[RMDB]
Annotation:
The record gives the reactivity of an RNA of 177 nucleotides to DMS and 2A3. The 2A3 profile rests on 2,516 reads. For DMS, 1,467 sequencing reads were counted.

RNA sequence: GGGAACGACUCGAGUAGAGUCGAAAACGCUGUGCGCGCCGGGCAGGCGCACGCCGACCAGCCCGGAGGUGAGCACGUCGCGGUCACGAAACAGCCGGGUGUCGCCCCGCCGACGCCCACCGCUCACCCAACGAGCAACAUUCGUGUUGCUCGUUGGAAAAGAAACAACAACAACAAC
Reactivity to DMS in 0.01 (KOAc 150mM, MgCl2 10mM, bicine 150mM(pH8.5), 24C), signal-to-noise 1, nucleotides 027 to 126: c160g000c060u000g010u010g020c110g000c020g000c020c000g120g080g090c060a020g000g000c020g000c160a010c230g020c000c040g000a130c050c000a030g000c000c030c000g000g000a090g000g060u000g000a080g060c060a300c020g010u010c010g050c020g000g000u020c090a220c060g000a050a050a060c010a060g010c000c200g000g000g020u010g000u000c000g000c090c060c000c040g020c200c000g000a050c000g000c060c000c020a010c050c100g000c000u000c040a050c050
Reactivity to 2A3 in 0.01 (KOAc 150mM, MgCl2 10mM, bicine 150mM(pH8.5), 24C), signal-to-noise 3, nucleotides 027 to 126: c040g000c030u080g020u060g020c030g000c020g040c000c000g020g000g030c080a040g040g000c020g000c030a010c050g060c030c020g190a300c000c010a020g020c000c000c000g010g010a040g030g090u080g040a030g000c010a010c030g080u140c030g010c020g020g020u130c060a040c150g080a130a060a100c050a020g060c050c050g000g000g010u020g010u000c010g000c020c020c030c020g120c150c010g000a010c000g020c010c000c010a010c000c000g000c010u050c020a050c010